Structure probing data (2A3 and DMS) for a 177-nucleotide construct. The DMS profile rests on 835 reads. Source: RMDB library OK2TST, as collected in RNAgym. For 2A3 the reverse transcriptase was SuperScript II with manganese.
RNA sequence: GGGAACGACUCGAGUAGAGUCGAAAAUGAGCCAGAAACAGUGGAGGGCACUGAGCAAAAAAAAGAUGGUUCUUGUCCUUUAGGGGCCUACCUUUCUAGUGCUGUGGUAUUCAAUUCACAGUGCACAGGUAAGCUAUAGCUUCGGCUAUAGCUUACCAAAAGAAACAACAACAACAAC
Reactivity to 2A3 in 0.01 (KOAc 150mM, MgCl2 10mM, bicine 150mM(pH8.5), 24C), signal-to-noise 1, nucleotides 027 to 126: u120g000a000g000c000c000a080g120a050a180a050c050a060g040u050g080g100a040g040g070g000c020a000c080u020g030a020g000c060a040a130a010a030a020a000a010a010g110a050u150g030g000u020u000c000u010u040g050u060c000c000u060u020u080a070g040g030g040g000c020c010u060a040c040c030u050u220u050c060u080a040g000u000g010c000u010g000u020g030g000u010a170u140u270c000a040a060u030u060c000a010c020a000g000u010g030c030a030c000a050
Reactivity to DMS in 0.01 (KOAc 150mM, MgCl2 10mM, bicine 150mM(pH8.5), 24C), signal-to-noise 1, nucleotides 027 to 126: u000g040a060g020c000c000a110g000a100a110a100c080a050g000u000g000g010a160g010g010g010c020a060c110u010g010a070g000c100a000a020a000a120a040a040a090a050g000a140u010g030g000u010u000c000u000u010g020u000c000c030u030u020u000a150g030g000g010g000c120c060u000a060c050c040u010u030u000c060u000a110g010u000g000c000u000g000u010g000g000u010a080u010u020c300a080a080u000u000c000a000c000a010g000u000g020c040a120c220a040